An RNA of 177 nucleotides, treated with 2A3 and DMS and read out base by base. For 2A3, 9,895 sequencing reads were counted. For DMS the reverse transcriptase was MarathonRT. It was measured as part of the RMDB library OK1LIB.
RNA sequence: GGGAACGACUCGAGUAGAGUCGAAAAGAAGCCUCUUGCAGGUCGCGGGAGGCUACACCGAUGGUCUCUGGCGGUGCCAGGGCACGCCAUCUGUUCGCGGUUCGGGUUUCGCGAGCGAAGGCGUGUGGCGCCUAGCUUCCUUCGGGAAGUUAGGCGCAAAAGAAACAACAACAACAAC
Reactivity to 2A3 in 0.01 (KOAc 150mM, MgCl2 10mM, bicine 150mM(pH8.5), 24C), signal-to-noise 8, nucleotides 027 to 126: g100a040a010g000c000c000u000c010u010u010g000c030a100g200g210u240c100g040c010g010g010g000a000g000g000c000u010a000c010a010c010c000g040a120u110g050g070u040c030u000c000u040g050g000c120g180g120u200g010c010c020a030g020g030g000c000a000c000g000c000c000a050u020c080u120g020u000u000c000g000c000g000g060u100u140c070g090g130g000u050u130u100c000g010c000g000a000g000c000g010a070a030g010g000c030g000u000g000u020g050
Reactivity to DMS in 0.01 (KOAc 150mM, MgCl2 10mM, bicine 150mM(pH8.5), 24C), signal-to-noise 2, nucleotides 027 to 126: g010a130a050g000c010c010u000c000u000u010g000c020a160g000g010u080c240g010c010g000g000g000a000g000g000c000u010a000c060a110c030c000g000a090u030g000g030u010c010u000c000u020g000g030c020g040g010u020g030c000c020a030g000g010g050c040a000c020g010c000c000a160u010c060u060g010u000u000c010g030c010g000g000u030u060c110g010g020g020u020u000u040c000g000c000g000a000g010c000g000a060a070g000g000c000g010u000g020u010g020